[RMDB]
RNA sequence: GGGAACGACUCGAGUAGAGUCGAAAAGGUAACUGGAGGAAAGUCAAAUGAUGAUGUAUCUGGCCCUGCUAACCAACUGAAGUUAAGCCGGGUUGCUCCCUUAGCAGUUGGAGCUAGGGAUGCUGAAGACGCAUCCAUUAUUCGUAAUGGAUGCGUCAAAAGAAACAACAACAACAAC
Reactivity to 2A3 in 0.01 (KOAc 150mM, MgCl2 10mM, bicine 150mM(pH8.5), 24C), signal-to-noise 2, nucleotides 027 to 126: g080g010u050a090a060c040u070g010g030a020g030g060a120a050a000g030u020c040a050a220a130u160g050a050u060g000a000u070g040u050a120u010c030u030g020g010c000c010c000u000g000c000u030a020a030c000c010a050a120c100u140g070a120a030g040u030u040a100a010g030c030c010g000g020g000u000u080g010c010u030c010c010c000u060u110a010g000c040a000g000u090u120g100g030a030g000c010u010a000g030g000g000a030u150g010c030u050g020a060a000
Reactivity to DMS in 0.01 (KOAc 150mM, MgCl2 10mM, bicine 150mM(pH8.5), 24C), signal-to-noise 3, nucleotides 027 to 126: g010g020u000a090a120c060u010g010g020a090g020g000a070a090a140g000u000c060a080a100a100u010g010a080u010g010a090u010g000u000a110u000c030u010g010g000c020c010c000u000g000c010u000a040a060c030c050a060a060c170u010g000a110a100g000u000u000a030a080g020c030c110g010g000g020u000u010g010c050u000c010c000c010u000u020a020g010c020a100g020u010u010g000g010a080g000c000u000a010g000g000g010a040u010g010c020u010g010a090a100